Source information
An RNA of 177 nucleotides, treated with DMS and read out base by base.

[RMDB]
RNA sequence: GGGAACGACUCGAGUAGAGUCGAAAAGAUAUGGAAUGGUCAUUCCUUGCAACAGCAUGCCAUAACAACGCUUCGGAAACGAAGCGUUGUUAUGGCAUGACAUGCAAGAAUGAGCCAUUCCUAAGUCGAAUAUUACUUCCUUCGGGAAGUAAUAUUCAAAAGAAACAACAACAACAAC
Reactivity to DMS in 0.01 (KOAc 150mM, MgCl2 10mM, bicine 150mM(pH8.5), 24C), signal-to-noise 4, nucleotides 027 to 126: g010a100u010a300u010g000g020a020a010u000g000g020u000c000a020u000u000c240c080u010u000g010c000a040a080c300a220g020c020a000u000g010c000c000a000u010a000a020c000a000a020c000g010c000u000u000c000g010g010a130a090a250c010g020a020a000g010c010g020u000u000g000u000u000a000u000g010g000c010a000u000g010a010c100a140u000g000c000a010a020g000a020a000u000g000a120g000c000c000a000u000u000c000c000u000a020a100g010u000c110

Description: The reactions ran in a buffer of 150 mM KOAc, 10 mM MgCl2 and 150 mM bicine (pH 8.5), at 24 C. The data come from the RNA Mapping Database (RMDB), library TTRINS. Values cover nucleotides 27 to 126.